Chemical mapping of a 177-nucleotide RNA with DMS. The DMS profile rests on 854 reads. The reactions ran in a buffer of 150 mM KOAc, 10 mM MgCl2 and 150 mM bicine (pH 8.5), at 24 C.
[RMDB]
RNA sequence: GGGAACGACUCGAGUAGAGUCGAAAAGAUAUGGACACGGAGGGAGCUUUGUCGGAAACGACUGAGCAUCGAUCUCCAGUGUCCUAAGUCAAAGAAGACAUUAUAGCUUCGGCUAUAAUGUCUUCAACAUAAGGGAAGCCUUCGGGCUUCCCUUAUGAAAAGAAACAACAACAACAAC
Reactivity to DMS in 0.01 (KOAc 150mM, MgCl2 10mM, bicine 150mM(pH8.5), 24C), signal-to-noise 1, nucleotides 027 to 126: g010a000u000a300u000g000g010a000c000a000c010g000g030a000g000g000g020a020g030c020u000u000u000g000u010c000g000g000a120a120a230c020g000a000c020u010g000a010g000c000a280u000c220g020a040u020c010u000c000c000a080g130u000g030u000c000c000u000a000a130g020u010c070a030a090a160g010a010a000g000a000c000a000u010u000a000u000a000g000c010u000u000c270g060g000c000u050a010u020a000a000u000g000u000c000u000u000c000a090a160